[RMDB]
RNA sequence: GGGAACGACUCGAGUAGAGUCGAAAAGCGUAUUUCGAUACGCAACCAUCCUAAGUCCCUCCGUUUGACGCGUCAUGGAGCUAUGUGUCGGAAACGACAUGCAUAGCUAUGAAGUGACGCCGAGGAGGGAUAUGGACCUGCUGCCUUUCGAGGCAAAUUUAGGCUAAGUUUUCGAACUUAGCCUAAAAAAAGAAACAACAACAACAAC
Reactivity to DMS in 0.01 (KOAc 150mM, MgCl2 10mM, bicine 150mM(pH8.5), 24C), signal-to-noise 2, nucleotides 027 to 156: g000c030g020u000a020u000u000u020c220g000a090u000a000c000g000c020a070a120c090c080a150u000c020c010u000a110a260g030u000c000c010c000u010c000c030g000u000u010u010g000a150c160g020c000g030u000c000a000u020g010g000a020g020c000u000a000u000g030u000g010u000c010g050g010a170a110a230c010g020a050c020a060u020g060c030a010u010a010g010c000u000a080u010g010a200a300g000u000g000a010c010g010c010c000g000a070g020g010a010g020g030g000a000u000a000u000g000g010a060c120c040u030g000c000u010g010c010c080u000u020u000c160g010a160g020g010c040a010a050a100
Reactivity to 2A3 in 0.01 (KOAc 150mM, MgCl2 10mM, bicine 150mM(pH8.5), 24C), signal-to-noise 5, nucleotides 027 to 156: g000c000g000u020a040u040u160u160c260g090a020u010a010c000g000c000a000a010c010c020a060u030c000c000u040a100a100g030u010c000c000c010u000c000c010g040u100u150u250g090a060c050g010c010g000u000c000a020u010g020g030a010g000c000u000a000u010g050u010g000u010c010g040g000a080a060a090c010g010a000c010a020u070g050c000a010u010a010g000c000u070a300u110g020a010a010g000u000g000a000c000g010c010c000g010a020g000g010a000g000g000g000a000u000a000u010g010g000a010c000c050u160g070c080u060g000c030c010u140u150u110c220g110a020g000g000c010a030a030a030

Source information
Chemical mapping of a 207-nucleotide RNA with DMS and 2A3. The RNA was probed in 150 mM KOAc, 10 mM MgCl2 and 150 mM bicine (pH 8.5) at 24 C.